The record gives the reactivity of an RNA of 177 nucleotides to DMS and 2A3. The DMS profile rests on 15,136 reads. For 2A3 the reverse transcriptase was SuperScript II with manganese. High 2A3 reactivity points to a flexible backbone, as in loops and unpaired stretches. It was measured as part of the RMDB library OK1LIB. For DMS the reverse transcriptase was MarathonRT.
[RMDB]
RNA sequence: GGGAACGACUCGAGUAGAGUCGAAAACACAUUCCUAAAUCCUUCGCCUGGGCCAAUCUGCUAGACAGCUGAGCGGAAAUCUCUUGCUUGUCCCAGGACAAGUAGAGAUUGUGGAAGUGAUAAUCCAACUGACCAUCAGGUUCGCCUGGUGGUCAGUAAAAGAAACAACAACAACAAC
Reactivity to DMS in 0.01 (KOAc 150mM, MgCl2 10mM, bicine 150mM(pH8.5), 24C), signal-to-noise 6, nucleotides 027 to 126: c110a080c130a210u000u010c010c000u000a050a100a110u020c050c010u000u000c050g010c040c040u020g000g010g000c020c040a050a120u010c030u020g000c030u010a100g010a150c120a050g010c050u020g010a060g000c100g010g000a060a040a010u000c020u000c000u000u030g060c010u000u010g000u000c000c010c200a150g000g000a000c020a000a010g010u000a020g000a020g010a020u000u000g010u000g000g000a040a040g010u000g000a080u010a100a090u030c020c040a100
Reactivity to 2A3 in 0.01 (KOAc 150mM, MgCl2 10mM, bicine 150mM(pH8.5), 24C), signal-to-noise 4, nucleotides 027 to 126: c040a000c000a190u000u010c000c000u010a020a020a050u040c010c000u050u040c010g010c010c010u030g010g020g000c010c000a030a080u030c020u030g000c010u030a030g030a120c020a020g020c020u060g040a010g020c020g030g000a040a010a000u010c000u000c000u020u110g030c000u000u000g000u000c000c000c030a080g020g020a000c000a010a000g000u010a000g000a000g000a000u000u060g030u050g020g020a020a020g010u010g060a070u050a100a050u040c010c010a030